Notes: Chemical mapping of a 177-nucleotide RNA with 2A3 and DMS. 2A3 adducts were read by reverse transcription with SuperScript II with manganese. As a SHAPE reagent, 2A3 marks flexible, mostly unpaired nucleotides at the ribose 2'-OH. The RNA was probed in 150 mM KOAc, 10 mM MgCl2 and 150 mM bicine (pH 8.5) at 24 C. For 2A3, 12,934 sequencing reads were counted.
[RMDB]
RNA sequence: GGGAACGACUCGAGUAGAGUCGAAAAACGUCCUCGAAAGAGGGCCAGGGGAGAAGGGCAAGGAAAGGUAUCUCGAACAAGAUCCUGCCUUGCCAGAAGGCAAAUUGAGGGUCCGUCCCGGGACUUCACAUGUAGUACGUUUCGACGUACUACAUGUAAAAGAAACAACAACAACAAC
Reactivity to 2A3 in 0.01 (KOAc 150mM, MgCl2 10mM, bicine 150mM(pH8.5), 24C), signal-to-noise 5, nucleotides 027 to 126: a010c040g030u010c010c010u010c000g050a090a050a020g010a000g000g000g010c020c030a060g020g030g020g030a120g020a120a070g100g000g000c010a000a010g020g020a250a260a020g030g030u200a040u010c040u030c080g120a130a040c050a080a040g000a000u000c000c000u020g000c000c000u010u010g000c000c000a000g030a040a010g050g000c040a020a070a110u110u120g020a110g030g000g050u020c020c020g010u040c000c000c010g000g010g000a010c000u070u060c050
Reactivity to DMS in 0.01 (KOAc 150mM, MgCl2 10mM, bicine 150mM(pH8.5), 24C), signal-to-noise 9, nucleotides 027 to 126: a100c200g010u000c010c000u000c000g010a120a110a170g000a010g010g000g010c000c130a040g010g010g010g010a160g010a110a120g010g000g000c010a020a010g000g000a030a060a020g000g000u010a020u000c000u000c100g010a110a130c300a090a020g000a010u000c000c000u000g000c010c000u000u000g000c000c010a030g000a100a070g000g000c140a040a060a100u010u010g000a090g010g000g010u000c010c020g000u010c000c010c010g000g010g010a060c040u010u000c100